[RMDB]
RNA sequence: GGGAACGACUCGAGUAGAGUCGAAAAGCUUUUCACUCACAAGUUUGGUAGCUGCCCUGAAAUGACAUGAAGGCUUAGUUCAGGUAGGAUUGUUGAUUGCAGUGCUUUUGCAUGGCUGUUCCAUGUUGCAUGGCCUUCCUCAGCAUGGCAGCCUCAAGGUGCAUACCUGAUUCGUCAGGUAUGCACCAAAAGAAACAACAACAACAAC
Reactivity to 2A3 in 0.01 (KOAc 150mM, MgCl2 10mM, bicine 150mM(pH8.5), 24C), signal-to-noise 1, nucleotides 027 to 156: g010c030u030u000u030u150c010a070c050u120c000a050c050a160a250g060u050u110u080g130g000u040a010g010c050u030g060c000c010c050u030g030a030a060a090u120g010a060c080a050u110g090a050a010g030g000c020u120u100a010g060u150u130c000a030g020g110u110a030g070g150a150u060u000g000u050u010g080a170u000u140g010c010a000g000u000g050c030u150u030u080u020g010c050a020u000g000g010c000u020g030u040u050c010c000a000u050g000u000u010g070c170a120u100g000g080c060c000u130u040c020c010u000c000a000g010c000a000u000g060g000c030a000g000c000c000u010c000a100a000
Structure probing data (2A3) for a 207-nucleotide construct.
The data come from the RNA Mapping Database (RMDB), library OK3TST.
The reactions ran in a buffer of 150 mM KOAc, 10 mM MgCl2 and 150 mM bicine (pH 8.5), at 24 C.
Values cover nucleotides 27 to 156.